[RMDB]
RNA sequence: GGGAACGACUCGAGUAGAGUCGAAAAUUUAACGCUGUUUUAUUGGCGCAAAGGUUUACGGAUAAACAACUAAUAAUUAAACCUUUUGUGUGCGAAACGUGGUUGUUUAACGUAGUCUUUAAUCGCUUUGGGGAUGUGUCCUUCGGGACACAUCCAAGUCCAUUUAGUCGUUCGCGACUAAAUGGACAAAAGAAACAACAACAACAAC
Reactivity to 2A3 in 0.01 (KOAc 150mM, MgCl2 10mM, bicine 150mM(pH8.5), 24C), signal-to-noise 1, nucleotides 027 to 156: u150u070u060a110a000c080g000c030u050g040u040u000u130u070a090u120u210g080g000c000g010c000a000a000a030g090g000u110u190u120a030c040g000g010a140u000a130a090a040c010a000a000c010u070a040a050u050a230a080u260u160a100a030a070c040c010u080u140u180u130g060u120g090u070g090c060g100a180a000a000c140g050u010g020g000u000u000g030u000u020u020a060a000c010g030u000a070g030u000c020u010u000u030a050a060u040c050g050c130u220u180u110g060g110g000g000a000u000g000u000g000u010c000c000u030u030c160g000g000g020a000c000a000c000a000u090c000c010a000a000
Structure probing data (2A3) for a 207-nucleotide construct.
2A3 adducts were read by reverse transcription with SuperScript II with manganese.